RNA sequence: GGGAACGACUCGAGUAGAGUCGAAAAGAUAUGGACGUCAGUAGCAUCGAUCAUGUCGGUCGGAAACGACCGCAUGGGAGCUACAUGACGUCCUAAGUCAAAAGUCGGUCAUGUUCGCAUGACCGACCGUGCUGUAGCGGUUCGCCGCUACAGCACGAAAAGAAACAACAACAACAAC
Reactivity to 2A3 in 0.01 (KOAc 150mM, MgCl2 10mM, bicine 150mM(pH8.5), 24C), signal-to-noise 1, nucleotides 027 to 126: g060a020u020a060u150g000g000a000c000g010u000c000a000g010u030a010g000c030a290u300c070g120a070u090c040a000u050g300u300c090g020g000u000c010g000g000a040a060a060c000g000a000c000c000g000c000a000u000g000g020g000a060g050c000u010a000c050a220u010g010a000c010g000u030c000c000u000a000a000g000u000c000a000a000a000a180g000u000c000g000g000u010c000a020u000g060u030u140c300g060c180a000u000g000a000c020c020g000a000c000
Reactivity to DMS in 0.01 (KOAc 150mM, MgCl2 10mM, bicine 150mM(pH8.5), 24C), signal-to-noise 2, nucleotides 027 to 126: g030a000u020a300u000g000g020a010c000g000u010c010a020g000u010a030g000c000a300u010c210g020a080u000c000a010u000g010u040c000g000g040u000c000g010g010a100a170a190c030g010a030c040c000g010c000a000u000g000g000g000a030g010c010u000a000c000a030u020g020a010c000g020u000c000c000u000a010a080g010u020c030a130a080a110a210g000u000c010g000g000u000c000a010u000g000u000u000c280g020c000a000u020g000a040c000c000g010a000c010